[RMDB]
RNA sequence: GGGAACGACUCGAGUAGAGUCGAAAAUACCGACAGGGUCGCGGUAGUCAAGGAUGGAAAGAGAACCAUCCUCACGGAGAAGGACCUUCUUAAGCUCUCGAUUGAGAAAACGAGGGAAAUAAAUCCCCUAAAUGAGCUAGUUCGCUAGCUCAUUUAGAAAAGAAACAACAACAACAAC
Reactivity to 2A3 in 0.01 (KOAc 150mM, MgCl2 10mM, bicine 150mM(pH8.5), 24C), signal-to-noise 2, nucleotides 027 to 126: u040a010c020c020g010a020c070a170g010g000g050u050c030g010c020g120g030u050a090g070u110c080a040a010g010g000a020u010g000g080a240a110a060g270a070g030a060a030c000c000a000u000c000c000u020c000a030c030g140g040a100g040a080a040g070g010a000c010c000u060u000c020u030u070a050a010g020c010u010c000u000c030g280a300u050u120g060a120g070a150a110a020a000c030g000a010g010g000g060a000a030a000u120a010a070a060u040c000c000c010
Reactivity to DMS in 0.01 (KOAc 150mM, MgCl2 10mM, bicine 150mM(pH8.5), 24C), signal-to-noise 5, nucleotides 027 to 126: u010a070c010c010g000a110c150a090g010g000g010u000c040g010c030g000g010u000a060g000u000c150a090a050g010g000a000u000g010g000a040a100a140g030a220g020a130a170c000c000a000u000c000c000u000c160a040c100g010g010a110g010a120a100g010g000a060c030c010u000u010c100u000u000a100a130g000c020u000c000u000c050g000a160u000u000g010a130g000a090a020a050a100c050g000a030g010g000g010a050a070a080u000a050a090a100u000c020c010c010